About this RNA
Chemical mapping of a 207-nucleotide RNA with 2A3 and DMS. For DMS, 2,449 sequencing reads were counted. The RNA was probed in 150 mM KOAc, 10 mM MgCl2 and 150 mM bicine (pH 8.5) at 24 C.

RNA sequence: GGGAACGACUCGAGUAGAGUCGAAAAACGUUGAUUUUCUUAAGGAGGUAGGGAAAAGUAGGGUAAUGUUGUUCCCGUCGCAAGUUGAAGGGAUAGGUUAUCCUGCCAUUGAGAGUGUCGUGUUAAAUCAACAACUUAUAAUGGGUGAUAUUGACGCCUGAGCAUGGAAAUUCGUUUCCAUGCUCAGAAAAGAAACAACAACAACAAC
Reactivity to 2A3 in 0.01 (KOAc 150mM, MgCl2 10mM, bicine 150mM(pH8.5), 24C), signal-to-noise 3, nucleotides 027 to 156: a000c060g010u010u010g010a090u040u070u080u030c060u080u090a040a050g010g010a030g000g020u080a020g000g000g000a020a070a070a040g020u040a020g010g020g010u030a000a040u050g130u270u030g040u100u030c020c010c000g030u030c020g000c080a140a060g070u120u140g120a090a010g030g000g000a030u050a030g040g010u010u010a010u010c000c000u000g000c000c000a050u010u110g040a080g010a010g030u020g060u080c080g010u020g030u090u090a060a110a040u090c020a020a030c010a010a050c040u160u120a110u040a220a130u100g010g010g000u050g030a050u050a050u150u090g040a010c050g030c000
Reactivity to DMS in 0.01 (KOAc 150mM, MgCl2 10mM, bicine 150mM(pH8.5), 24C), signal-to-noise 1, nucleotides 027 to 156: a060c110g030u000u000g000a120u000u010u020u000c080u000u000a110a190g020g000a090g060g000u000a100g000g000g010a040a040a090a110g010u010a030g000g010g020u010a040a070u010g000u010u000g000u000u000c010c030c020g000u020c030g040c070a080a140g010u000u010g020a060a050g000g010g020a040u010a040g030g010u000u000a090u030c030c000u000g010c020c000a150u000u000g000a090g000a120g030u000g000u010c020g000u010g000u000u000a030a030a130u000c010a030a070c000a010a060c040u030u000a180u000a030a040u010g010g000g000u020g000a120u000a100u000u000g030a130c080g020c080